[RMDB]
RNA sequence: GGGAACGACUCGAGUAGAGUCGAAAAGAUAUGGACUAAGAGCGAUAAGUAUUUGUCGGAAACGACAGGGUACUUUUGACGCUCGAAGUCCUAAGUCAAAAGCUGUGUCGCUUCGGCGACACAGCAACUAGUACCAGUGGUUCGCCACUGGUACUAGAAAAGAAACAACAACAACAAC
Reactivity to DMS in 0.01 (KOAc 150mM, MgCl2 10mM, bicine 150mM(pH8.5), 24C), signal-to-noise 2, nucleotides 027 to 126: g000a020u000a270u000g000g000a030c000u000a070a300g010a020g020c000g000a170u000a020a020g010u000a010u000u010u000g040u000c010g020g000a040a060a180c000g010a010c000a000g010g010g000u000a010c000u000u000u000u000g040a150c050g010c000u000c020g000a170a030g000u000c000c000u000a010a100g000u000c050a110a070a080a140g020c010u010g010u000g000u010c000g030c020u000u020c200g010g020c000g000a000c000a010c000a000g020c020a010a030
Reactivity to 2A3 in 0.01 (KOAc 150mM, MgCl2 10mM, bicine 150mM(pH8.5), 24C), signal-to-noise 2, nucleotides 027 to 126: g010a010u060a020u120g000g000a000c000u040a100a010g000a010g010c010g140a250u070a300a030g020u000a040u030u090u000g010u000c010g030g000a040a040a070c000g020a000c000a000g160g010g040u000a000c010u070u200u230u270g200a060c000g000c000u000c020g000a020a000g000u030c000c000u000a030a030g000u000c000a020a010a030a200g010c000u000g010u010g040u000c010g000c000u080u130c300g180g000c000g000a000c020a000c000a000g000c000a000a010